[RMDB]
RNA sequence: GGGAACGACUCGAGUAGAGUCGAAAACGAUGCCGAUCGUAAUUAUAUACGUAAUAUUACGCGCGUAUAAUCGAUUACGAUUAUAAUCGAUAUGCAUCGGCCGUAUACGCGGCUAUAUACGCGUAUAUGCCGACCAGUUUUUCGAAACUGGUCGGCAAAAAGAAACAACAACAACAAC
Reactivity to 2A3 in 0.01 (KOAc 150mM, MgCl2 10mM, bicine 150mM(pH8.5), 24C), signal-to-noise 1, nucleotides 027 to 126: c030g010a020u030g000c000c060g040a010u030c010g000u010a000a050u050u040a030u010a000u000a080c010g000u030a040a160u090a120u190u260a090c080g060c000g020c050g120u070a030u020a060a140u060c140g070a010u020u010a010c000g030a000u070u080a020u050a050a070u120c050g000a030u020a010u190g000c020a010u000c000g010g010c000c010g070u030a000u000a030c030g000c010g000g060c110u030a060u050a010u030a180c010g070c000g010u000a000u000a000
Reactivity to DMS in 0.01 (KOAc 150mM, MgCl2 10mM, bicine 150mM(pH8.5), 24C), signal-to-noise 1, nucleotides 027 to 126: c030g000a010u000g010c000c100g020a050u010c000g030u030a040a020u000u000a050u000a020u000a130c000g000u000a060a100u000a120u010u010a090c160g000c200g010c040g020u000a020u000a030a050u020c140g000a000u000u000a020c020g010a250u000u000a090u010a160a060u000c060g000a100u000a110u020g000c040a000u000c010g000g010c000c020g000u000a060u000a010c010g000c000g000g000c200u000a050u020a050u010a040c000g000c000g010u000a000u000a020